[RMDB]
RNA sequence: GGGAACGACUCGAGUAGAGUCGAAAACAGGAUAGCACCCGGCGUGUACUUGGCUGCUUCCGGGUAGCGGCCCACUAGCUUGUCGACCAUCGCGACAACCUCGUCUACCUGGUCUGCCGCGGCGCCAAGUGCACUGGGCGUUCGCGCCCAGUGCACUAAAAGAAACAACAACAACAAC
Reactivity to 2A3 in 0.01 (KOAc 150mM, MgCl2 10mM, bicine 150mM(pH8.5), 24C), signal-to-noise 1, nucleotides 027 to 126: c020a030g170g050a210u120a080g100c070a120c000c030c040g020g000c050g000u020g030u060a100c050u090u100g050g030c000u030g000c030u080u080c010c000g010g000g000u000a010g020c050g020g040c000c080c010a060c020u000a000g030c010u000u060g000u010c030g050a260c060c040a300u140c130g020c000g050a010c000a000a020c000c030u100c030g170u070c010u000a020c000c000u000g020g010u070c070u060g040c030c010g010c050g020g000c010g000c010c000a070
Reactivity to DMS in 0.01 (KOAc 150mM, MgCl2 10mM, bicine 150mM(pH8.5), 24C), signal-to-noise 1, nucleotides 027 to 126: c100a210g010g000a060u000a060g000c040a130c030c020c130g000g000c080g040u000g000u010a020c050u000u000g050g010c070u000g000c070u000u000c020c000g000g010g000u000a020g010c090g010g000c070c050c010a060c130u020a040g020c220u000u000g000u000c000g000a160c070c120a160u000c200g000c050g000a010c020a000a030c030c070u000c040g000u000c010u000a030c020c000u010g010g000u010c100u000g020c030c040g060c140g000g000c020g020c010c010a040